[RMDB]
RNA sequence: GGGAACGACUCGAGUAGAGUCGAAAAAAAGGCUUAUCAAGAGAGGUGGAGGGACUGGACCGAUGAAACCCGGCAGCCAGAAAUGGUGCCAAUUCUUGCAGCGGAAACGUUGAAAGAUGAGCCGAAACCAAUAAGGGUUGUUCGCAACCCUUAUUGGAAAAGAAACAACAACAACAAC
Reactivity to DMS in 0.01 (KOAc 150mM, MgCl2 10mM, bicine 150mM(pH8.5), 24C), signal-to-noise 1, nucleotides 027 to 126: a010a070a100g000g000c020u000u000a080u000c050a120a160g000a070g010a160g000g000u010g050g000a110g000g000g010a130c130u000g000g000a120c020c000g040a030u000g000a040a080a040c170c080c030g060g030c040a100g010c050c000a050g000a100a050a100u000g010g000u020g000c040c000a020a030u020u000c060u000u020g000c000a030g010c030g000g010a070a090a120c010g050u000u020g000a030a010a060g010a020u000g020a080g000c010c000g000a130a110a110